[RMDB]
RNA sequence: GGGAACGACUCGAGUAGAGUCGAAAAGCUGUGAAUAGGUAAGCCUAUAUCUGUUCGCACUACAGGCACUAUGUCGCAUCAUGGUCCCUGUGUACUCGAAGCUUGAUGCGACAAGUUUUGAGUGAUCUCAGACACUAUAGGCUUAGUUCUUGAGAGCAGUAUGGUAAUCGUUCGCGAUUACCAUACUAAAAGAAACAACAACAACAAC
Reactivity to DMS in 0.01 (KOAc 150mM, MgCl2 10mM, bicine 150mM(pH8.5), 24C), signal-to-noise 3, nucleotides 027 to 156: g040c050u010g050u000g000a070a080u000a050g010g010u000a010a020g020c000c000u000a010u000a020u000c020u010g010u000u000c020g010c060a070c050u000a120c030a050g020g020c110a070c030u010a060u000g020u000c090g010c110a050u000c000a020u010g010g010u000c030c020c010u000g030u000g010u000a050c030u010c020g020a040a060g020c030u000u000g000a090u000g030c170g000a130c020a020a030g010u000u000u000u000g010a080g040u010g000a110u010c060u010c020a140g020a100c060a050c080u000a040u000a030g010g000c000u010u000a090g010u010u000c030u010u010g040a120g010a130g050c180
Reactivity to 2A3 in 0.01 (KOAc 150mM, MgCl2 10mM, bicine 150mM(pH8.5), 24C), signal-to-noise 9, nucleotides 027 to 156: g040c050u030g010u040g100a060a030u050a080g060g000u030a030a000g000c000c000u000a010u010a020u030c010u010g030u040u050c030g020c020a020c020u170a070c020a040g020g050c070a020c030u080a100u190g020u050c050g020c090a050u040c000a010u090g030g050u110c020c010c030u050g040u040g040u110a070c040u040c050g040a050a020g030c010u020u000g010a010u060g060c030g060a020c020a000a000g000u000u010u030u020g030a020g010u030g100a120u020c040u020c040a020g030a030c040a010c090u020a000u000a020g000g000c000u020u030a030g030u090u030c030u060u130g070a120g000a020g060c030

The record gives the reactivity of an RNA of 207 nucleotides to DMS and 2A3. In probing experiments dimethyl sulfate is read out at A N1 and C N3, which are open when not base-paired. Conditions: 150 mM KOAc, 10 mM MgCl2 and 150 mM bicine (pH 8.5), 24 C. It was measured as part of the RMDB library OK3TST. For 2A3 the reverse transcriptase was SuperScript II with manganese.